[RMDB]
RNA sequence: GGGAACGACUCGAGUAGAGUCGAAAAUCGACGUCCUCGACCUUGACGACACCCUCGAUUUCGUAGUUGGUCUCGUUUGUGCUCCAGAGAACAUAGCCGCAAAGAGGGAGAGAUAUUAAGAGCAUUAUCCAGCUAACAAGGUGUUCUGUGAGGAACGGUCCAACAUACUUUUCGAAGUAUGUUGGACAAAAGAAACAACAACAACAAC
Reactivity to DMS in 0.01 (KOAc 150mM, MgCl2 10mM, bicine 150mM(pH8.5), 24C), signal-to-noise 4, nucleotides 027 to 156: u000c020g040a110c050g030u010c020c010u000c010g010a060c020c020u000u000g030a140c020g010a080c070a300c010c020c010u000c020g010a170u000u000u000c060g010u000a100g030u000u020g000g020u000c010u000c040g010u000u020u000g000u000g000c010u010c000c030a100g010a070g010a040a070c040a100u000a090g010c030c040g060c090a050a120a190g010a090g020g010g010a090g000a110g030a100u000a050u000u000a030a070g010a060g000c030a090u000u000a100u000c020c030a130g020c080u010a070a200c040a050a050g060g000u000g000u000u010c060u010g000u010g000a060g010g020a040a040c060g020
Reactivity to 2A3 in 0.01 (KOAc 150mM, MgCl2 10mM, bicine 150mM(pH8.5), 24C), signal-to-noise 8, nucleotides 027 to 156: u160c030g040a020c030g050u030c010c010u020c020g040a060c020c010u030u070g030a060c060g030a020c020a070c030c020c010u050c030g120a160u070u130u130c090g030u060a060g070u030u050g040g030u010c020u020c080g100u060u100u140g070u070g020c020u030c040c050a040g020a010g010a130a000c030a060u150a070g070c040c030g050c110a070a090a020g070a060g000g050g010a040g030a010g000a010u080a010u130u210a110a030g020a000g030c000a000u040u000a020u100c030c030a020g030c060u040a050a090c020a040a030g000g020u020g040u130u070c100u120g090u070g030a020g000g030a030a050c040g050